Source: RMDB library OK3TST, as collected in RNAgym. This 207-nucleotide RNA was probed chemically with 2A3 and DMS. For 2A3, 2,470 sequencing reads were counted.
RNA sequence: GGGAACGACUCGAGUAGAGUCGAAAACAGAUGUACUAAUACUCAUGGUAAAGGCUCAAACGAUUCAGAAAUAUACUCCAUGAAAAUAUAAAAGCCAAUGACACCUGUAUAUUCCUUGCUUUCAAGAUAACCAUCACUCAUAGGUUAGUGUCAAUACCAUUACGUCAACUUUCGAGUUGACGUAAUGAAAAGAAACAACAACAACAAC
Reactivity to 2A3 in 0.01 (KOAc 150mM, MgCl2 10mM, bicine 150mM(pH8.5), 24C), signal-to-noise 4, nucleotides 027 to 156: c020a010g040a030u060g040u090a100c040u120a030a080u070a140c020u010c040a020u040g010g000u090a100a100a090g050g010c030u030c140a100a120a080c110g060a080u160u110c040a040g080a060a140a000u120a010u030a110c040u010c010c000a020u040g000a040a050a120a010u170a000u070a060a120a030a010g010c030c000a020a020u050g010a010c000a010c050c000u030g040u040a050u010a010u140u070c010c000u040u090g080c060u090u130u100c070a080a020g000a130u060a070a030c020c010a020u080c040a050c110u090c040a050u080a110g040g060u030u020a030g020u050g040u040c020a040a010u070a100c000
Reactivity to DMS in 0.01 (KOAc 150mM, MgCl2 10mM, bicine 150mM(pH8.5), 24C), signal-to-noise 2, nucleotides 027 to 156: c010a060g010a080u000g000u000a100c090u000a150a090u000a060c110u010c030a040u000g010g000u000a060a150a150g010g060c050u000c060a070a130a160c110g040a080u000u000c110a120g020a110a090a130u020a140u000a050c070u000c010c050a090u000g000a030a030a060a130u000a090u010a040a100a090a060g000c040c060a040a100u000g020a010c010a010c030c000u000g080u010a070u000a130u000u000c000c000u010u000g000c050u000u000u000c090a040a090g030a110u000a040a020c010c020a080u000c070a120c130u010c100a170u010a150g010g000u000u010a070g000u020g010u000c030a030a100u000a150c100